[RMDB]
RNA sequence: GGGAACGACUCGAGUAGAGUCGAAAAAGGUCAUUGCUAGUGGAGUCCGAUUUAGCCAUGCUAGUUGCACGAGUUUAGACUCGUAGCAGAUAGCUCAGUAACACGUGGCCAAACUACCCUCUGGAUCACUCCGGAUUGGGUUCGCCCAAUCCGGAGUAAAAGAAACAACAACAACAAC
Reactivity to 2A3 in 0.01 (KOAc 150mM, MgCl2 10mM, bicine 150mM(pH8.5), 24C), signal-to-noise 2, nucleotides 027 to 126: a000g070g000u010c000a010u000u120g100c060u000a000g080u040g190g040a040g060u000c010c010g040a080u090u000u080a000g030c000c010a000u030g000c000u020a030g180u030u020g000c000a000c020g000a000g000u020u190u150a210g100a030c000u000c000g000u000a040g000c000a000g000a060u010a000g000c000u000c060a080g070u140a070a050c050a020c090g010u000g000g030c000c000a060a000a000c010u020a040c000c030c000u000c000u050g030g040a070u130c010
This 177-nucleotide RNA was probed chemically with 2A3.
Reactivities are given for positions 27 through 126.
It was measured as part of the RMDB library RFM100.
2A3 adducts were read by reverse transcription with SuperScript II with manganese.
The RNA was probed in 150 mM KOAc, 10 mM MgCl2 and 150 mM bicine (pH 8.5) at 24 C.